[RMDB]
RNA sequence: GGGAACGACUCGAGUAGAGUCGAAAAUUGAUUGGACGUUCAAUAUAAAAUGUGUCUUAAUUGUUACGAAUUUGAUUUUAAAUAGUAACAAUAACAGUGGGGAUACUGGAUGACAGACCUUUCACACCAGUCAUAUGGUUUUCGAACCAUAUGACUGAAAAGAAACAACAACAACAAC
Reactivity to 2A3 in 0.01 (KOAc 150mM, MgCl2 10mM, bicine 150mM(pH8.5), 24C), signal-to-noise 4, nucleotides 027 to 126: u030u030g020a010u030u090g060g030a030c050g020u070u030c050a100a060u120a030u110a240a080a030a100u110g050u010g010u010c010u040u150a080a040u020u000g010u000u000a000c020g020a040a070u030u010u030g040a100u030u100u210u300a010a020a000u030a010g000u010a000a010c000a010a000u030a040a030c020a020g060u040g040g070g000g030a030u070a140c000u020g030g040a110u180g040a020c020a030g070a090c000c000u020u050u060c030a040c030a040c040
Reactivity to DMS in 0.01 (KOAc 150mM, MgCl2 10mM, bicine 150mM(pH8.5), 24C), signal-to-noise 5, nucleotides 027 to 126: u000u020g000a060u010u010g010g020a190c080g000u010u000c030a030a050u000a080u010a080a080a060a070u000g010u010g010u010c040u010u010a100a050u000u000g000u000u000a010c000g010a100a160u000u000u010g010a200u000u000u010u010a020a010a020u000a180g000u000a010a000c000a000a020u000a080a070c100a080g020u010g020g010g010g000a110u000a030c020u000g010g000a120u010g010a150c070a090g010a070c050c020u000u000u020c030a060c200a120c210
Source: RMDB library OK2TST, as collected in RNAgym.
An RNA of 177 nucleotides, treated with 2A3 and DMS and read out base by base.
Conditions: 150 mM KOAc, 10 mM MgCl2 and 150 mM bicine (pH 8.5), 24 C.